[RMDB]
RNA sequence: GGGAACGACUCGAGUAGAGUCGAAAACUGAAGAGAUCGAAAAGCGAAACCGUGAGCGAAAUAAGCAGUCGAAAAUUUUACGCUCACCUACAGAGCAAUUCGAUAAGGAGUUAAUUUCACUAAAAGCGCAGCUUAAGGUUUUGCAAGAGCACAAGGACCAUGUGUAACACUUCGGUGUUACACAUGGAAAAGAAACAACAACAACAAC
Reactivity to 2A3 in 0.01 (KOAc 150mM, MgCl2 10mM, bicine 150mM(pH8.5), 24C), signal-to-noise 4, nucleotides 027 to 156: c010u030g030a050a000g050a050g010a050u080c040g010a010a050a040a050g020c030g040a070a010a010c050c030g020u040g010a000g000c010g010a040a030a070u120a100a020g040c090a020g090u120c080g120a030a050a060a090u110u150u060u070a110c040g000c000u010c000a020c000c010u080a070c070a040g050a000g010c000a030a090u010u020c000g010a010u030a050a040g040g010a010g030u050u050a070a130u080u130u100c090a060c060u120a070a100a030a060g030c070g000c050a030g010c040u030u060a080a040g040g000u050u060u060u080g050c040a050a040g010a010g020c020a010c020a040a030g060g000a020
Reactivity to DMS in 0.01 (KOAc 150mM, MgCl2 10mM, bicine 150mM(pH8.5), 24C), signal-to-noise 1, nucleotides 027 to 156: c070u000g000a160a030g020a140g020a060u010c040g020a070a100a070a300g060c010g020a120a080a060c000c070g040u010g000a040g020c060g020a080a030a150u000a170a150g050c080a170g000u000c000g000a040a090a130a090u000u030u030u010a200c030g020c010u010c000a060c070c030u000a040c110a170g000a230g020c040a030a300u010u000c050g040a060u020a050a020g060g030a110g030u000u020a040a120u000u000u020c100a050c030u010a010a020a030a160g000c100g010c050a050g050c050u000u000a050a080g000g000u000u000u000u000g010c030a100a080g000a120g010c010a010c040a060a120g000g000a270